This 177-nucleotide RNA was probed chemically with 2A3 and DMS. The data come from the RNA Mapping Database (RMDB), library TTRDES. The RNA was probed in 150 mM KOAc, 10 mM MgCl2 and 150 mM bicine (pH 8.5) at 24 C. 2A3 adducts were read by reverse transcription with SuperScript II with manganese. For DMS, 20,975 sequencing reads were counted. Values cover nucleotides 27 to 126.
RNA sequence: GGGAACGACUCGAGUAGAGUCGAAAAGAUAUGGAUCGUUGUAGGGAGUCGGGAUGUCGGAAACGACAUUCCGACGAAGAACUACACCGAUCCUAAGUCAAAAGUGUACGUGUUCGCACGUACACAACAACUAAAAUGGGUUCGCCCAUUUUAGUUGAAAAGAAACAACAACAACAAC
Reactivity to 2A3 in 0.01 (KOAc 150mM, MgCl2 10mM, bicine 150mM(pH8.5), 24C), signal-to-noise 5, nucleotides 027 to 126: g010a000u020a000u060g000g000a010u000c000g010u010u010g000u000a010g020g030g130a300g030u000c010g000g000g000a000u000g010u000c000g000g010a000a010a010c000g010a000c000a000u000u010c000c010g010a000c000g000a000a010g000a000a000c000u000a000c000a010c030c020g000a000u010c000c000u000a010a000g020u000c030a010a040a130a230g000u010g000u000a000c000g000u010g040u080u110c300g020c120a000c010g000u000a000c000a000c000a000a010
Reactivity to DMS in 0.01 (KOAc 150mM, MgCl2 10mM, bicine 150mM(pH8.5), 24C), signal-to-noise 6, nucleotides 027 to 126: g000a010u000a060u010g000g000a000u000c000g020u000u000g010u000a000g010g000g010a070g020u000c010g010g010g000a010u000g000u000c000g010g000a020a010a040c010g010a020c010a020u000u000c000c000g010a000c000g010a060a110g000a140a080c000u000a000c000a010c080c000g000a010u000c000c000u000a000a060g000u000c010a130a100a110a150g020u000g010u000a000c000g020u000g010u000u020c280g030c010a010c010g010u000a000c000a000c000a080a170